[RMDB]
RNA sequence: GGGAACGACUCGAGUAGAGUCGAAAACGGGGCCUGGGGGUGGGGCCCCAGCAGAUGUCUGGAUUUGGUAGCCAGGGCCUGGAGCCGGAUGCUGAGAACGAGGCCUGCAACUCAUUUCCCCAUUAAAACAUUUGAGUGAAUUCGUUCACUCAAAUGUAAAAGAAACAACAACAACAAC
Reactivity to DMS in 0.01 (KOAc 150mM, MgCl2 10mM, bicine 150mM(pH8.5), 24C), signal-to-noise 2, nucleotides 027 to 126: c110g030g000g040g010c070c010u010g050g000g020g010g000u000g020g010g030g000c040c020c010c020a040g020c080a070g000a070u050g010u020c030u010g000g000a130u020u010u010g020g000u010a060g010c040c030a130g000g000g000c010c020u000g000g000a140g010c030c030g000g010a080u000g000c020u050g000a130g020a090a100c040g000a110g010g010c010c020u020g000c100a090a100c040u010c020a040u010u030u020c010c020c000c100a080u030u030a080a080a110
Reactivity to 2A3 in 0.01 (KOAc 150mM, MgCl2 10mM, bicine 150mM(pH8.5), 24C), signal-to-noise 4, nucleotides 027 to 126: c020g000g000g000g040c020c010u050g060g000g010g010g010u050g000g000g000g000c000c000c010c000a010g010c010a000g010a140u200g030u030c020u060g010g090a170u050u070u110g060g000u040a020g010c030c040a060g000g030g000c000c030u090g110g020a030g000c000c000g020g000a020u060g010c030u040g020a030g020a140a040c040g010a040g030g030c000c010u020g010c000a040a050c010u010c030a040u070u040u040c000c000c000c020a050u120u180a030a070a000